Conditions: 150 mM KOAc, 10 mM MgCl2 and 150 mM bicine (pH 8.5), 24 C. This 177-nucleotide RNA was probed chemically with DMS and 2A3. For 2A3, 2,687 sequencing reads were counted. Reactivities are given for positions 27 through 126.

[RMDB]
RNA sequence: GGGAACGACUCGAGUAGAGUCGAAAAUGGAAGAAACAAUACUCCAGAGACAUCUUUGAAAACUACCUUUAGAGCCUGGUGCGGUGGUGCGUUCUUAUAGUCCCAGCUACUCUGGAGGCUGAGGCUGUAUAGACUAUCCAUUCGUGGAUAGUCUAUAAAAAGAAACAACAACAACAAC
Reactivity to DMS in 0.01 (KOAc 150mM, MgCl2 10mM, bicine 150mM(pH8.5), 24C), signal-to-noise 7, nucleotides 027 to 126: u000g010g000a110a070g010a110a090a110c140a090a080u010a080c120u010c010c000a020g000a040g010a280c140a050u000c050u010u000u000g000a060a070a090a080c090u000a060c040c030u010u000u000a120g010a100g010c050c040u000g010g010u000g000c080g010g030u000g010g020u000g000c080g010u000u000c020u010u000a070u000a020g020u000c000c000c000a010g000c020u000a120c010u010c010u010g000g010a040g010g010c010u000g000a040g000g000c010u000g020
Reactivity to 2A3 in 0.01 (KOAc 150mM, MgCl2 10mM, bicine 150mM(pH8.5), 24C), signal-to-noise 2, nucleotides 027 to 126: u110g040g000a140a020g030a050a260a010c040a080a070u080a110c020u000c010c000a010g000a010g000a030c030a120u060c070u100u170u170g100a100a090a040a030c050u080a080c030c000u050u080u150a100g030a040g090c010c000u080g060g020u100g030c050g000g010u020g000g020u040g040c020g020u060u000c020u030u120a110u060a100g020u030c000c010c000a000g000c000u040a040c000u000c010u010g010g000a000g010g000c000u000g000a020g010g000c010u010g000